[RMDB]
RNA sequence: GGGAACGACUCGAGUAGAGUCGAAAAGAGGCGUUGGAUUUCAUGCGCAGCGUGCUUGGAGUGCGGCUGGGACAGCUGUCGCUGAUGCGGGGGGAGAGCACGCGGCACAAGCUCGUGCUGGUGAAGGCAUCGUUGACGAUUUCGAUCGUCAACGAUGAAAAGAAACAACAACAACAAC
Reactivity to DMS in 0.01 (KOAc 150mM, MgCl2 10mM, bicine 150mM(pH8.5), 24C), signal-to-noise 2, nucleotides 027 to 126: g010a090g000g010c110g040u010u010g000g000a090u000u000u010c080a080u000g000c050g020c060a060g020c030g020u010g000c030u010u000g000g020a110g020u000g030c040g000g010c030u010g000g000g000a110c110a060g010c040u000g000u010c040g020c010u000g010a120u010g020c090g000g000g020g000g000g020a180g000a040g010c020a030c020g010c110g010g000c020a070c170a100a120g000c080u010c090g000u000g030c040u010g020g020u000g020a110a080g010g000
Reactivity to 2A3 in 0.01 (KOAc 150mM, MgCl2 10mM, bicine 150mM(pH8.5), 24C), signal-to-noise 1, nucleotides 027 to 126: g090a030g000g030c040g000u060u060g070g020a140u080u080u120c060a040u210g060c110g000c050a010g000c050g030u080g030c020u050u070g080g040a070g030u080g000c050g000g030c070u030g030g030g040a060c050a040g040c020u090g130u250c080g010c090u060g030a070u150g050c090g010g010g040g000g000g000a130g000a000g060c000a000c000g010c060g020g000c000a000c020a120a000g050c000u030c070g030u030g020c030u040g020g040u100g040a060a010g010g000
Chemical mapping of a 177-nucleotide RNA with DMS and 2A3. The DMS profile rests on 2,600 reads. For 2A3, 1,426 sequencing reads were counted. For 2A3 the reverse transcriptase was SuperScript II with manganese. DMS adducts were read by reverse transcription with MarathonRT.